[RMDB]
RNA sequence: GGGAACGACUCGAGUAGAGUCGAAAACUAGAAUCAUCUGCAAAUUAGAGUGAAACAACCCUCUCCAGCUGAGGCAGCUGUUAGGGGCUGGCCGUGAAGGUCUCAUGGGAACCUUGUGUCUUCUCUCUCAUGUCUGCUGACCAAUCAGUAGGAGGAAGUAGCCUAUUUAUUUCGAUAAAUAGGCUACAAAAGAAACAACAACAACAAC
Reactivity to DMS in 0.01 (KOAc 150mM, MgCl2 10mM, bicine 150mM(pH8.5), 24C), signal-to-noise 2, nucleotides 027 to 156: c030u010a120g020a110a140u010c030a050u000c060u000g000c110a110a110a170u000u000a070g010a110g030u000g000a100a110a110c050a080a150c010c010c010u000c030u010c140c030a280g010c020u000g000a140g000g010c020a040g010c000u000g010u000u020a120g010g020g030g020c010u000g030g020c000c050g000u010g030a100a100g020g040u000c030u010c020a050u010g010g020g000a020a050c040c020u010u000g030u000g000u000c010u000u010c020u010c040u000c030u000c030a080u000g010u000c020u010g010c000u000g010a120c050c120a060a180u000c020a020g030u000a090g010g000a050g000g010a080a190
Reactivity to 2A3 in 0.01 (KOAc 150mM, MgCl2 10mM, bicine 150mM(pH8.5), 24C), signal-to-noise 4, nucleotides 027 to 156: c020u020a050g090a060a040u050c020a020u030c030u120g050c080a050a060a210u110u090a110g020a030g070u100g030a060a080a060c040a040a080c020c000c000u030c010u000c030c010a030g000c010u010g030a040g040g050c010a000g010c010u050g010u120u040a010g030g030g020g010c050u020g040g000c020c020g070u070g160a040a010g010g000u000c040u050c080a090u100g050g030g070a040a050c020c020u080u070g080u040g020u120c050u070u000c090u030c010u000c000u010c040a050u060g090u030c030u020g000c000u010g070a280c030c040a100a120u060c000a010g030u030a050g010g010a030g000g050a110a010
The record gives the reactivity of an RNA of 207 nucleotides to DMS and 2A3.
Values cover nucleotides 27 to 156.
For DMS, 4,218 sequencing reads were counted.
The RNA was probed in 150 mM KOAc, 10 mM MgCl2 and 150 mM bicine (pH 8.5) at 24 C.
For 2A3 the reverse transcriptase was SuperScript II with manganese.
For 2A3, 2,305 sequencing reads were counted.
It was measured as part of the RMDB library OK3TST.